The record gives the reactivity of an RNA of 177 nucleotides to 2A3. The RNA was probed in 150 mM KOAc, 10 mM MgCl2 and 150 mM bicine (pH 8.5) at 24 C. 2A3 adducts were read by reverse transcription with SuperScript II with manganese. It was measured as part of the RMDB library OK1LIB.

RNA sequence: GGGAACGACUCGAGUAGAGUCGAAAAGAAGAUAAGAAAAUUUUCCGGUGGCCAGCCGCCCGGGCCACCGUUACUCCACUCCACUCCUUCGGGACUGGUUUGGAGGAACAUAACAGGGCGGAUAGAAAGUACUGCGAUUAUUCGUAAUCGCAGUACUAAAAGAAACAACAACAACAAC
Reactivity to 2A3 in 0.01 (KOAc 150mM, MgCl2 10mM, bicine 150mM(pH8.5), 24C), signal-to-noise 2, nucleotides 027 to 126: g040a020a030g020a060u220a160a040g140a090a120a110a090u090u050u080u020c020c000g000g000u000g010g000c000c040a060g030c020c000g000c000c000c000g020g000g000c000c000a000c010c000g000u000u020a000c000u000c000c000a000c000u000c010c000a010c010u000c000c000u020u110c180g030g000g000a000c010u000g000g020u000u000u010g010g000a000g000g000a010a010c050a040u300a050a010c000a020g000g000g000c000g000g000a000u020a010g050a030a080